[RMDB]
RNA sequence: GGGAACGACUCGAGUAGAGUCGAAAAGGGCAAAGAAAAUUGCGUUGGAGAGGGAACUUGCGGAUGUGCAGAAGCAAGUGAGUGAUAUCCGAAUGAAACUGCGCUCCUUGUCAGCACUUGAGCGUUAGCGAUGAGUAUGAUUCGUCAUACUCAUCGCAAAAGAAACAACAACAACAAC
Reactivity to DMS in 0.01 (KOAc 150mM, MgCl2 10mM, bicine 150mM(pH8.5), 24C), signal-to-noise 9, nucleotides 027 to 126: g010g000g010c060a060a090a100g010a070a060a100a110u000u010g010c110g010u000u000g010g010a140g010a110g010g000g000a070a070c080u000u000g020c030g000g010a090u010g010u000g010c040a040g010a130a160g010c020a020a030g010u000g000a040g010u000g000a070u010a130u010c070c080g010a090a110u010g000a050a050a100c150u000g000c030g000c010u000c010c030u000u000g000u000c040a230g000c050a040c030u000u000g000a090g010c030g010u010u010a100
Reactivity to 2A3 in 0.01 (KOAc 150mM, MgCl2 10mM, bicine 150mM(pH8.5), 24C), signal-to-noise 9, nucleotides 027 to 126: g020g000g000c060a060a070a030g150a080a190a080a050u140u130g040c050g070u080u100g050g040a160g020a070g050g020g020a040a030c030u060u100g010c010g050g080a070u100g040u030g020c020a020g010a100a000g010c010a010a020g020u070g110a010g010u050g020a060u020a050u090c060c040g060a070a080u140g060a060a080a010c060u100g000c020g000c010u010c000c020u040u010g090u120c030a020g000c010a030c010u040u070g050a030g040c040g040u060u130a020
This 177-nucleotide RNA was probed chemically with DMS and 2A3. It was measured as part of the RMDB library OK2TST. For DMS, 18,222 sequencing reads were counted. For 2A3 the reverse transcriptase was SuperScript II with manganese. For 2A3, 17,068 sequencing reads were counted. High 2A3 reactivity points to a flexible backbone, as in loops and unpaired stretches.